[RMDB]
RNA sequence: GGGAACGACUCGAGUAGAGUCGAAAAGGGCCGCGGGUAUAGAUCGACGGGGACGCCGACCGACUCCCCGCCUCCGGGACAGACACGCACGACGCGCCGCCAGUAGUGCUCUGCGUCCAACAAGGCGAGGCGUGAAUUCUUUCGAGAAUUCACGCCUAAAAGAAACAACAACAACAAC
Reactivity to 2A3 in 0.01 (KOAc 150mM, MgCl2 10mM, bicine 150mM(pH8.5), 24C), signal-to-noise 3, nucleotides 027 to 126: g020g020g000c010c000g070c010g000g020g060u150a120u110a130g100a100u150c070g040a050c020g020g000g000g020a010c030g020c030c000g070a040c030c010g020a030c010u040c000c010c000c000g020c020c010u080c020c020g040g000g030a030c010a010g050a020c010a000c100g010c020a040c020g070a040c030g020c000g000c040c000g050c030c010a030g040u120a010g000u100g040c050u000c020u050g040c010g020u020c000c000a090a080c050a170a050g080g010c010g020
Reactivity to DMS in 0.01 (KOAc 150mM, MgCl2 10mM, bicine 150mM(pH8.5), 24C), signal-to-noise 2, nucleotides 027 to 126: g000g000g060c070c020g000c030g050g020g050u020a080u010a150g000a080u020c040g000a240c010g050g010g000g030a080c090g020c040c030g040a110c090c060g010a090c160u000c000c010c000c030g020c020c020u000c010c070g000g040g010a060c100a110g000a070c150a000c020g000c040a010c140g000a110c110g000c040g020c090c010g000c030c030a050g000u020a100g000u030g000c040u020c020u030g020c030g010u040c030c060a100a060c270a050a090g010g000c140g000